[RMDB]
RNA sequence: GGGAACGACUCGAGUAGAGUCGAAAACACAACUUCGAGGAAACACCGGAAAAUAUGAUGGAAAUCCUGUCUGAGCUGACUUCUCUGACCCCUAAGGUGGUCAAGGUUUCUGUCAUGGCUCACAAUGCGUCACCAGGCGAUUCGUCGCCUGGUGACGAAAAGAAACAACAACAACAAC
Reactivity to 2A3 in 0.01 (KOAc 150mM, MgCl2 10mM, bicine 150mM(pH8.5), 24C), signal-to-noise 1, nucleotides 027 to 126: c060a000c000a030a060c060u140u180c070g040a030g000g080a100a070a000c090a090c070c020g030g140a000a000a000a070u140a000u160g020a010u080g000g000a060a060a000u110c000c000u050g260u180c110u140g000a000g030c000u020g090a080c030u080u000c170u060c040u050g000a000c000c000c000c000u000a060a000g100g000u000g070g000u070c000a030a020g020g000u110u070u100c200u020g000u000c000a100u100g060g000c020u160c040a060c000a000a150u100g010

This 177-nucleotide RNA was probed chemically with 2A3. The data come from the RNA Mapping Database (RMDB), library OK1LIB.